[RMDB]
Source: RMDB library OK3TST, as collected in RNAgym. The record gives the reactivity of an RNA of 207 nucleotides to DMS and 2A3. For 2A3 the reverse transcriptase was SuperScript II with manganese. For DMS the reverse transcriptase was MarathonRT. The reactions ran in a buffer of 150 mM KOAc, 10 mM MgCl2 and 150 mM bicine (pH 8.5), at 24 C. For 2A3, 522 sequencing reads were counted.
RNA sequence: GGGAACGACUCGAGUAGAGUCGAAAAAGAUUUGGCAAGGGCACAAGAACUGUUUUUUUUCCUGAUGUUCUAUUUAGAACCCUGAUAAAGAACCCUAGACUUUUGUUACACUAUUAAGUUUUUGACAGAUACAUGGGAGCUUAGUUUGUGCUGGGAAUCAAAAUGACCAUUUCGAUGGUCAUUUUGAAAAAGAAACAACAACAACAAC
Reactivity to DMS in 0.01 (KOAc 150mM, MgCl2 10mM, bicine 150mM(pH8.5), 24C), signal-to-noise 1, nucleotides 027 to 156: a110g010a160u000u000u010g040g060c050a080a050g000g010g000c000a040c030a050a070g010a010a090c140u000g010u000u000u000u000u000u000u000u000c020c040u000g010a140u010g020u120u000c020u000a170u010u010u000a070g010a070a050c020c030c020u000g010a140u000a100a050a100g000a070a070c010c050c010u000a080g010a100c050u000u000u000u020g000u000u000a050c070a030c050u000a050u030u030a030a030g030u000u000u020u020u000g030a150c130a040g020a220u010a050c050a120u030g010g000g000a030g000c030u010u000a070g020u000u000u010g030u000g030c020u000g010g010g010a060a210
Reactivity to 2A3 in 0.01 (KOAc 150mM, MgCl2 10mM, bicine 150mM(pH8.5), 24C), signal-to-noise 1, nucleotides 027 to 156: a000g080a080u140u070u030g060g000c000a050a010g010g030g000c060a070c020a070a050g050a110a020c020u010g100u090u010u000u030u000u000u020u050c010c040u100g040a110u090g020u000u060c000u040a160u030u160u030a060g010a100a040c000c000c040u020g000a010u130a100a160a010g040a020a060c000c000c000u090a120g010a150c010u180u140u040u150g040u070u180a040c070a010c050u150a040u270u110a100a010g070u020u050u020u140u090g040a060c020a020g120a020u090a090c060a050u120g030g000g020a040g000c010u030u050a050g020u120u090u120g000u000g010c000u020g000g000g100a020a050